[RMDB]
RNA sequence: GGGAACGACUCGAGUAGAGUCGAAAAGAUUCUUUCCGGAGAGUCCCGCUCCUUCAGGUGAACGAUCUCGGUUGUUUCUCUGAAGGCAUGAUCACCCCGUCCGAUGCGGAAGUUCGUGCUUCCGUCGGGAAUUCGCGUUUUUCGAAACGCGAAUUCCAAAAGAAACAACAACAACAAC
Reactivity to 2A3 in 0.01 (KOAc 150mM, MgCl2 10mM, bicine 150mM(pH8.5), 24C), signal-to-noise 2, nucleotides 027 to 126: g060a020u040u020c000u040u030u080c030c040g080g000a090g020a020g090u000c040c000c000g090c000u000c030c000u000u010c000a010g000g050u040g080a020a000c000g040a040u030c060u070c180g020g020u000u040g000u010u110u000c050u000c000u000g020a020a000g050g000c000a070u160g000a010u070c040a120c000c050c010c030g040u080c060c020g020a040u300g000c000g030g000a000a010g000u120u300c070g080u300g080c000u000u020c000c000g020u000c020g000
The record gives the reactivity of an RNA of 177 nucleotides to 2A3. For 2A3 the reverse transcriptase was SuperScript II with manganese. Conditions: 150 mM KOAc, 10 mM MgCl2 and 150 mM bicine (pH 8.5), 24 C.